[RMDB]
RNA sequence: GGGAACGACUCGAGUAGAGUCGAAAAAAUUCAAUGAUUUCAACUUCACUGCUGACCAGCCACGCCUCAACGCCUCGGAGUGUUUGCCCCCAGUCUCUGAUAGAUACACCAUAUUCUAAUACACACAUCACUGCAUCCCGUUCGCGGGAUGCAGUGAAAAAGAAACAACAACAACAAC
Reactivity to 2A3 in 0.01 (KOAc 150mM, MgCl2 10mM, bicine 150mM(pH8.5), 24C), signal-to-noise 1, nucleotides 027 to 126: a010a010u100u120c030a120a000u140g050a050u050u000u250c080a030a030c020u050u020c020a020c030u150g000c000u030g000a050c000c000a100g000c000c000a000c000g100c000c000u190c030a210a070c130g000c000c000u000c070g120g050a090g000u160g000u000u000u110g000c000c060c000c000c000a000g130u030c040u020c010u060g010a030u080a260g000a000u080a010c030a000c050c000a000u000a020u120u000c000u100a060a190u070a150c000a000c000a040c000a090
Source: RMDB library RFM100, as collected in RNAgym.
This 177-nucleotide RNA was probed chemically with 2A3.
Values are in units of 0.01, from 0 to 300, in steps of 10.
Values cover nucleotides 27 to 126.